[RMDB]
RNA sequence: GGGAACGACUCGAGUAGAGUCGAAAAGUGAAAGCUCCUUCUCUCGCAAUGUGUAACUCAUGAUUUUCAUGACCCCUGGUUGGAGAGAUCCGGACUAGGAGCCAGGGGGCCUCUGAUUCUGCCAGCCAAAACUGUCGUAAGUUCGCUUACGACAGAAGUAAUUCUACAGGUUCGCCUGUAGAAUUACAAAAGAAACAACAACAACAAC
Reactivity to 2A3 in 0.01 (KOAc 150mM, MgCl2 10mM, bicine 150mM(pH8.5), 24C), signal-to-noise 4, nucleotides 027 to 156: g080u080g030a120a030a020g020c020u040c000c010u040u020c010u000c000u030c010g060c090a050a120u100g040u030g010u120a060a040c020u010c030a020u040g050a120u110u090u160u140c010a010u060g040a050c000c000c000c010u010g000g030u040u090g050g020a060g010a010g020a110u020c050c040g060g050a070c080u100a090g040g020a010g010c000c000a000g010g000g000g000g000c010c010u000c010u040g040a100u110u010c020u090g040c020c010a030g020c030c010a040a090a120a170c020u000g000u000c000g000u000a000a000g010u020u090c180g010c130u000u000a000c000g000a000c000a000g000a000a000
Reactivity to DMS in 0.01 (KOAc 150mM, MgCl2 10mM, bicine 150mM(pH8.5), 24C), signal-to-noise 1, nucleotides 027 to 156: g040u010g020a100a060a160g020c000u000c020c030u000u000c010u000c000u000c040g020c040a110a060u020g020u000g040u000a100a080c060u000c040a060u010g000a180u000u010u010u010c030a070u000g000a100c000c010c000c000u010g000g000u000u000g030g000a050g030a160g010a070u000c000c000g010g010a160c050u000a110g010g000a060g000c010c000a080g000g000g000g010g000c070c010u000c080u000g000a120u000u000c030u030g000c020c030a070g000c010c010a010a070a110a150c000u000g020u000c000g040u010a010a040g000u010u010c300g010c010u000u000a010c010g010a020c010a020g000a010a090
Chemical mapping of a 207-nucleotide RNA with 2A3 and DMS. Values cover nucleotides 27 to 156. For DMS the reverse transcriptase was MarathonRT. It was measured as part of the RMDB library M2RFPK.